This 177-nucleotide RNA was probed chemically with DMS and 2A3. For DMS, 6,986 sequencing reads were counted. Values cover nucleotides 27 to 126.

[RMDB]
RNA sequence: GGGAACGACUCGAGUAGAGUCGAAAAGAUAUGGAACUCGCAUGCAUUUCGUUGAAAGCGAUCGGAAACGAUCGCUGGAGAAAUGUGCGAGGUUCCUAAGUCAAAUCCAAGACUUCGGUCUUGGAAAGAUCUUCUAAAGGUUCGCCUUUAGAAGAUCAAAAGAAACAACAACAACAAC
Reactivity to DMS in 0.01 (KOAc 150mM, MgCl2 10mM, bicine 150mM(pH8.5), 24C), signal-to-noise 2, nucleotides 027 to 126: g000a040u010a300u010g010g010a020a060c000u000c000g010c010a090u010g030c120a080u000u000u000c010g010u000u010g020a200a130a060g010c000g010a000u000c010g000g000a080a100a170c010g010a000u000c000g020c000u000g000g000a030g010a010a030a070u010g020u000g000c000g000a020g030g010u000u000c000c000u010a030a130g000u000c030a100a160a210u000c010c000a000a010g000a020c000u000u010c250g040g000u000c010u000u000g010g010a010a060a100
Reactivity to 2A3 in 0.01 (KOAc 150mM, MgCl2 10mM, bicine 150mM(pH8.5), 24C), signal-to-noise 3, nucleotides 027 to 126: g000a010u070a040u160g020g010a000a000c000u000c010g000c030a030u260g050c030a140u050u050u070c110g200u280u040g030a020a010a000g000c010g000a000u000c010g010g060a070a030a070c000g000a000u000c020g000c000u000g000g000a010g010a000a060a030u060g000u000g000c010g000a020g030g030u020u000c000c000u010a070a010g040u010c040a100a050a090u010c000c000a000a000g000a000c020u060u190c300g130g000u010c010u000u030g000g000a030a010a000